[RMDB]
RNA sequence: GGGAACGACUCGAGUAGAGUCGAAAACGAUGACGCCGGGGCGGUGUCGCUGUUGGUGAACUACAACACCAUGUACUUCGCCCUGGCUCGGCGUGCCGCGCUGCGACCGGGAGACACCGUGCUGGUGCAGACGCCGUUGCUUCGGCAACGGCGUCUGAAAAGAAACAACAACAACAAC
Reactivity to 2A3 in 0.01 (KOAc 150mM, MgCl2 10mM, bicine 150mM(pH8.5), 24C), signal-to-noise 1, nucleotides 027 to 126: c000g170a180u090g050a000c030g000c000c000g000g000g000g000c000g000g000u010g040u060c110g000c000u280g000u280u020g000g010u000g070a150a000c040u300a030c120a160a010c000a000c020c020a050u060g020u050a030c030u000u070c020g030c010c000c010u070g000g020c020u000c000g000g020c010g000u030g150c080c080g040c000g000c080u070g020c050g110a130c040c000g020g000g050a080g040a000c020a000c000c000g010u080g060c250u150g050g030u000g000